Overview:
This 177-nucleotide RNA was probed chemically with 2A3 and DMS. The DMS profile rests on 5,822 reads. Conditions: 150 mM KOAc, 10 mM MgCl2 and 150 mM bicine (pH 8.5), 24 C.

[RMDB]
RNA sequence: GGGAACGACUCGAGUAGAGUCGAAAAUGAGCAUCAUGCAGCCUUGAGGGUCGCAUCUGGAAACCAGAGCAGCCUAUGGGGCUUGAGGGUAGAGCUUUGCCGAGGAGGUGGUACAAGUGUCACGUCCCAAACUACCCAGUUUCGACUGGGUAGUUUGAAAAGAAACAACAACAACAAC
Reactivity to 2A3 in 0.01 (KOAc 150mM, MgCl2 10mM, bicine 150mM(pH8.5), 24C), signal-to-noise 3, nucleotides 027 to 126: u120g020a020g030c000a060u070c010a020u160g060c050a020g030c000c010u060u080g070a190g050g010g030u090c040g000c040a270u000c030u030g080g040a260a150a080c060c000a000g010a000g030c000a010g000c010c000u100a160u220g040g000g000g000c000u050u110g010a050g050g020g040u070a070g010a010g080c020u050u080u110g010c030c030g030a060g040g030a040g000g050u070g030g020u060a060c050a120a050g020u020g030u120c030a010c050g140u090c010c010
Reactivity to DMS in 0.01 (KOAc 150mM, MgCl2 10mM, bicine 150mM(pH8.5), 24C), signal-to-noise 4, nucleotides 027 to 126: u000g010a060g010c040a080u010c060a070u000g020c060a070g010c020c000u000u010g010a250g000g000g000u010c070g010c030a100u000c020u010g010g000a130a160a160c110c010a020g010a030g000c030a050g010c020c010u010a100u010g010g000g010g000c010u000u010g020a050g010g010g020u000a050g010a110g010c050u000u010u010g010c050c040g010a120g000g010a080g000g030u000g010g000u000a070c110a070a100g020u000g000u000c060a040c100g000u000c000c020